[RMDB]
RNA sequence: GGGAACGACUCGAGUAGAGUCGAAAACAUUUGCAGCAGCAUGGGGAUGGAAUUGGAGGUCAUUAUGCUAAGGGAAAUAAGCCAGGCACAGCAGGACAAAUAUCUUAUGUUCUCAAUCGUAUGUGGAAGCUUAAAUAUUUCAUUCCAUGGAGGUAGAAAAUGCAUACCUAUUCGUAGGUAUGCAUUUAAAAGAAACAACAACAACAAC
Reactivity to 2A3 in 0.01 (KOAc 150mM, MgCl2 10mM, bicine 150mM(pH8.5), 24C), signal-to-noise 7, nucleotides 027 to 156: c020a040u050u060u160g020c030a030g010c000a010g020c020a040u070g020g000g010g030a020u050g020g050a050a060u090u060g050g010a030g010g020u040c030a040u020u140a050u120g030c040u080a050a080g030g010g030a040a060a080u110a050a000g010c020c010a030g050g000c020a000c020a060g040c020a010g020g000a010c040a020a070a020u140a030u040c070u120u140a090u120g040u040u010c020u000c000a080a110u070c050g040u100a080u120g010u020g020g020a020a010g000c000u050u060a030a100a020u090a080u030u110u080c070a050u060u020c020c010a010u060g040g020a050g000g040u120a040g090a050
Reactivity to DMS in 0.01 (KOAc 150mM, MgCl2 10mM, bicine 150mM(pH8.5), 24C), signal-to-noise 5, nucleotides 027 to 156: c050a110u000u000u000g030c040a070g010c040a050g020c060a150u000g010g010g020g010a090u010g000g010a080a120u000u010g010g020a090g030g010u000c060a070u000u000a080u000g010c050u010a100a170g020g010g000a060a080a130u000a060a090g020c030c010a100g020g040c050a090c060a060g030c060a090g000g020a090c040a030a060a090u000a160u010c080u010u000a110u000g010u000u000c030u000c020a050a100u010c120g000u000a070u010g050u000g000g000a060a060g000c020u000u000a020a070a100u000a060u000u010u000c030a300u010u000c010c010a060u010g010g010a070g040g020u000a070g000a050
This 207-nucleotide RNA was probed chemically with 2A3 and DMS. DMS adducts were read by reverse transcription with MarathonRT. For 2A3 the reverse transcriptase was SuperScript II with manganese. The data come from the RNA Mapping Database (RMDB), library OK3TST. Conditions: 150 mM KOAc, 10 mM MgCl2 and 150 mM bicine (pH 8.5), 24 C.